Structure probing data (2A3) for a 177-nucleotide construct. The reactions ran in a buffer of 150 mM KOAc, 10 mM MgCl2 and 150 mM bicine (pH 8.5), at 24 C.

[RMDB]
RNA sequence: GGGAACGACUCGAGUAGAGUCGAAAAUGCGUUCUUAUAACGCUUGGCUAUAAUAAACAUCUAUCUAUCCGUAGCGUCACAAUGUGUAAUUAGCCGACAUUUGGCGUAUGAACUGAAGAGACAUCACCCUGGCUCCACUAUUCGUAGUGGAGCCAGGAAAAGAAACAACAACAACAAC
Reactivity to 2A3 in 0.01 (KOAc 150mM, MgCl2 10mM, bicine 150mM(pH8.5), 24C), signal-to-noise 1, nucleotides 027 to 126: u050g000c000g000u000u080c150u070u090a020u300a090a000c000g000c010u000u000g060g000c090u040a000u080a270a110u230a050a110a180c000a120u060c050u100a020u000c000u000a110u060c000c080g060u090a000g020c000g000u000c000a000c000a060a110u000g000u000g030u030a160a160u020u180a110g020c080c000g000a000c000a000u000u020u000g000g000c000g000u090a100u140g010a060a000c050u100g000a070a080g080a000g000a000c000a000u100c000a010c000